[RMDB]
RNA sequence: GGGAACGACUCGAGUAGAGUCGAAAAUUUUAGACAAGAUGGAACUGUUAAAUCCAGCUUAGUCUUGAGUGGAGAAGCGGUAGAACAGAUCGGAUCAAUCAUGAGAUCUCAGCAGAAUCUAGUGACAAUUAACGACUGGAUUCGUCCAGUCGUUAAUAAAAGAAACAACAACAACAAC
Reactivity to DMS in 0.01 (KOAc 150mM, MgCl2 10mM, bicine 150mM(pH8.5), 24C), signal-to-noise 3, nucleotides 027 to 126: u000u000u010u000a040g020a030c020a010a020g010a050u000g000g000a030a100c170u000g010u010u020a090a220a100u000c040c010a050g030c000u010u010a120g020u000c020u010u000g000a080g000u010g000g000a070g010a070a100g010c010g030g010u010a050g000a070a060c120a030g020a070u000c070g010g020a080u010c060a070a120u000c100a070u000g000a120g000a030u000c020u000c070a080g010c090a100g000a070a050u000c030u000a110g020u020g010a070c150a050
Reactivity to 2A3 in 0.01 (KOAc 150mM, MgCl2 10mM, bicine 150mM(pH8.5), 24C), signal-to-noise 2, nucleotides 027 to 126: u000u000u000u020a000g010a030c040a010a000g010a000u040g000g010a070a070c060u080g120u270u110a090a110a090u030c000c030a000g030c000u020u010a060g020u090c000u000u090g070a080g010u060g020g090a070g000a130a010g030c010g000g060u090a060g050a070a050c020a020g030a040u070c000g010g000a020u020c050a000a100u130c030a090u090g000a010g020a080u020c020u010c060a120g000c020a000g060a110a010u040c000u020a040g040u020g050a020c050a070
An RNA of 177 nucleotides, treated with DMS and 2A3 and read out base by base. For DMS the reverse transcriptase was MarathonRT. For 2A3, 1,141 sequencing reads were counted. The DMS profile rests on 2,584 reads. The reactions ran in a buffer of 150 mM KOAc, 10 mM MgCl2 and 150 mM bicine (pH 8.5), at 24 C.